[RMDB]
RNA sequence: GGGAACGACUCGAGUAGAGUCGAAAACGAUCUGUGGGCGCCGAAGGGGCAGUUAAAUCCGAAGGACCUUCAUUAAACUGCCAGCAAAUCCAGCCAUGUGUAUACCGGCGAGUGUCCUUCGCAUCAACUAUUUAAUCGUCUUCGGACGAUUAAAUAGAAAAGAAACAACAACAACAAC
Reactivity to DMS in 0.01 (KOAc 150mM, MgCl2 10mM, bicine 150mM(pH8.5), 24C), signal-to-noise 5, nucleotides 027 to 126: c090g020a070u010c040u000g030u010g000g000g010c030g050c030c020g000a130a100g010g000g000g020c030a000g000u010u020a040a110a120u030c210c010g000a030a010g000g000a030c010c040u000u010c150a090u020u030a040a070a060c040u000g020c000c010a090g000c120a060a090a070u050c080c050a090g010c030c070a050u030g000u010g010u030a070u020a080c120c080g000g000c060g000a030g000u010g000u000c000c000u000u000c000g010c300a080u020c120a070a200
Reactivity to 2A3 in 0.01 (KOAc 150mM, MgCl2 10mM, bicine 150mM(pH8.5), 24C), signal-to-noise 9, nucleotides 027 to 126: c030g020a070u050c030u080g050u100g050g020g020c040g000c010c020g050a090a040g070g010g000g000c000a000g000u010u050a080a120a080u100c110c060g000a010a000g020g010a020c000c020u080u050c040a030u020u150a090a070a020c010u010g010c010c000a030g060c050a090a090a060u100c050c020a010g050c030c010a120u140g090u020g030u100a040u050a190c050c020g020g000c020g020a020g010u150g000u010c000c000u000u010c020g000c010a140u120c030a020a080
The record gives the reactivity of an RNA of 177 nucleotides to DMS and 2A3. DMS adducts were read by reverse transcription with MarathonRT. The RNA was probed in 150 mM KOAc, 10 mM MgCl2 and 150 mM bicine (pH 8.5) at 24 C.